Structure probing data (DMS and 2A3) for a 177-nucleotide construct. The 2A3 profile rests on 1,398 reads. Conditions: 150 mM KOAc, 10 mM MgCl2 and 150 mM bicine (pH 8.5), 24 C. It was measured as part of the RMDB library RFMREP. For DMS the reverse transcriptase was MarathonRT. Reactivities are given for positions 27 through 126.
RNA sequence: GGGAACGACUCGAGUAGAGUCGAAAACUCAAAGGCAUGUGUGAUGACACAACUUUUUUCCCCAUCAGAUCGACCAUGUUGAUCACAUUCUUUUAAGCCAGUAUGUCUGACAUGCCUGCCUGAAUACGACAUGUAAUCCGUUCGCGGAUUACAUGUCAAAAGAAACAACAACAACAAC
Reactivity to DMS in 0.01 (KOAc 150mM, MgCl2 10mM, bicine 150mM(pH8.5), 24C), signal-to-noise 2, nucleotides 027 to 126: c030u010c090a090a200a020g020g020c010a050u000g030u000g000u000g010a210u010g000a020c020a000c080a040a090c020u000u000u000u000u000u000c010c020c000c240a100u000c160a100g020a030u000c010g000a020c020c160a160u000g010u000u000g010a040u000c020a160c070a090u020u000c050u000u010u000u000a030a050g000c120c060a030g000u010a040u000g000u000c020u010g020a080c080a020u000g000c010c010u010g000c110c050u000g010a060a070u000a120c240
Reactivity to 2A3 in 0.01 (KOAc 150mM, MgCl2 10mM, bicine 150mM(pH8.5), 24C), signal-to-noise 2, nucleotides 027 to 126: c020u010c030a090a130a000g000g030c020a000u020g020u020g040u030g040a140u110g020a010c010a000c030a050a140c030u150u070u000u010u130u130c010c000c030c010a070u060c040a010g010a030u000c020g010a010c020c100a070u250g000u060u030g060a030u030c000a000c020a080u090u070c060u060u170u020u070a030a010g030c040c000a020g040u070a060u090g010u020c030u030g100a070c020a010u000g020c020c000u010g000c000c020u060g040a050a020u110a080c080